[RMDB]
RNA sequence: GGGAACGACUCGAGUAGAGUCGAAAAAGCACGUUCGCGUGCUAACACACCUUUGUGAUGGAAGCUACCAGCAAGGCGUUACAGCCCAUUGGGCUGACAAGAACGCUGAUGACCUGGUAGAUAACAUCACUCUGGUACCAACUACGUUCGCGUAGAAAAACAGUUACGGGUUCGCCCGUAACUGUUUAAAAGAAACAACAACAACAAC
Reactivity to 2A3 in 0.01 (KOAc 150mM, MgCl2 10mM, bicine 150mM(pH8.5), 24C), signal-to-noise 2, nucleotides 027 to 156: a000g000c000a010c000g030u070u130c210g000c020g050u000g060c000u050a110a030c080a000c000a040c040c000u010u030u050g000u000g010a000u000g020g020a180a180g000c000u000a000c000c000a000g000c060a130a140g040g030c010g010u000u030a050c010a010g020c000c010c050a190u290u300g000g000g020c010u050g010a050c060a010a130g110a170a000c010g010c000u000g100a250u090g010a010c020c000u000g020g000u020a000g000a000u000a010a000c000a000u000c000a000c000u000c000u000g010g000u000a070c000c000a040a110c000u010a040c000g050u020u130c300g000c050g030u020a000g160a160a070
This 207-nucleotide RNA was probed chemically with 2A3. The data come from the RNA Mapping Database (RMDB), library RNAMAK.